Source: RMDB library OK1LIB, as collected in RNAgym. This 177-nucleotide RNA was probed chemically with 2A3. For 2A3, 325 sequencing reads were counted. Conditions: 150 mM KOAc, 10 mM MgCl2 and 150 mM bicine (pH 8.5), 24 C.

RNA sequence: GGGAACGACUCGAGUAGAGUCGAAAAAUCAAAGGAGGCCACGUGAUGGUUCAGCAGUCCCUUCAUAUUAAUAAGGGCUGGAAGCAACGCCAACUUACGCGUGGCGUAACCCUCAUCGCAACCACGGACGCUGUGGUCCGUUCGCGGACCACAGCGUAAAAGAAACAACAACAACAAC
Reactivity to 2A3 in 0.01 (KOAc 150mM, MgCl2 10mM, bicine 150mM(pH8.5), 24C), signal-to-noise 1, nucleotides 027 to 126: a000u120c030a080a000a000g140g000a010g000g000c000c000a000c000g090u040g040a240u030g000g050u070u120c000a180g010c000a000g090u300c000c180c000u000u000c120a160u220a000u120u260a210a000u120a180a000g000g000g000c000u000g010g000a010a000g000c140a000a090c030g030c000c000a030a030c000u080u160a000c030g000c000g000u000g000g050c000g000u000a000a000c000c000c000u090c000a090u300c090g080c010a010a000c000c030a060c040g150g000